[RMDB]
RNA sequence: GGGAACGACUCGAGUAGAGUCGAAAAGAUAUGGAGCGAUUCUUCGCAUCGAUCGGGGUAUACGAGCAGUAUAUCGGAAACGAUAUACCAGGUGUAUACCCCGGGAGCGAAGAUUCGCUCCUAAGUCCUUAUCCAAUCAGUUCGCUGAUUGGAUAAGAAAAGAAACAACAACAACAAC
Reactivity to 2A3 in 0.01 (KOAc 150mM, MgCl2 10mM, bicine 150mM(pH8.5), 24C), signal-to-noise 3, nucleotides 027 to 126: g040a000u050a020u170g000g000a000g030c020g020a010u000u000c010u010u020c000g000c020a170u300c070g060a070u060c000g000g010g030g030u000a020u000a020c300g280a180g090c030a010g030u020a000u000a000u000c000g000g010a050a050a010c010g000a000u000a000u010a000c030c020a130g080g230u300g050u200a020u020a010c030c000c000c000g000g000g010a010g000c000g010a000a000g000a000u000u000c000g010c000u000c000c000u000a000a010g000u000c000
Reactivity to DMS in 0.01 (KOAc 150mM, MgCl2 10mM, bicine 150mM(pH8.5), 24C), signal-to-noise 4, nucleotides 027 to 126: g000a040u000a090u020g010g000a020g020c010g020a010u000u000c010u000u000c010g020c000a300u000c220g000a040u010c000g000g000g000g010u000a010u000a010c000g010a160g020c300a220g010u000a000u010a000u000c000g010g000a050a040a070c000g000a020u000a000u000a000c000c060a220g010g010u000g010u000a000u000a000c010c000c000c000g000g000g010a010g030c000g020a020a020g000a000u010u000c000g010c010u010c000c000u000a000a050g000u000c020
Conditions: 150 mM KOAc, 10 mM MgCl2 and 150 mM bicine (pH 8.5), 24 C. Structure probing data (2A3 and DMS) for a 177-nucleotide construct. It was measured as part of the RMDB library TTRINS. For DMS, 7,581 sequencing reads were counted. Reactivities are given for positions 27 through 126. Reactivities are rounded to 0.1 and cut off at 0 and 3.